[RMDB]
RNA sequence: GGGAACGACUCGAGUAGAGUCGAAAACUUCUUGUACAUACAGCACUUCUUUUUAAUGCUUUUAUUUUUUUGAGACAGGGUCUUACUCUGUCACCCAGGCUGGAGUGCAGUGGCACCAUCAUGGCUAACUGCAGCCUUGACCUCCCGGGCUCAAGCAAUCCCCAUUACUGUUCGCAGUAAUGGGGAUAAAAGAAACAACAACAACAAC
Reactivity to 2A3 in 0.01 (KOAc 150mM, MgCl2 10mM, bicine 150mM(pH8.5), 24C), signal-to-noise 1, nucleotides 027 to 156: c000u080u040c000u060u160g200u120a030c030a040u140a000c030a000g040c010a010c050u000u130c020u000u170u060u090u220a070a030u140g010c040u100u060u050u060a220u180u190u060u060u000u020u190g150a080g000a010c010a010g000g040g030u000c010u080u040a140c020u000c010u040g000u000c020a000c040c030c000a010g050g000c000u040g060g130a030g110u000g040c020a000g060u040g080g000c000a040c010c030a080u110c030a090u200g030g020c010u100a160a000c000u100g030c010a020g060c010c000u040u150g030a150c010c000u000c000c000c010g000g040g050c020u030c110a030a030g070c000a000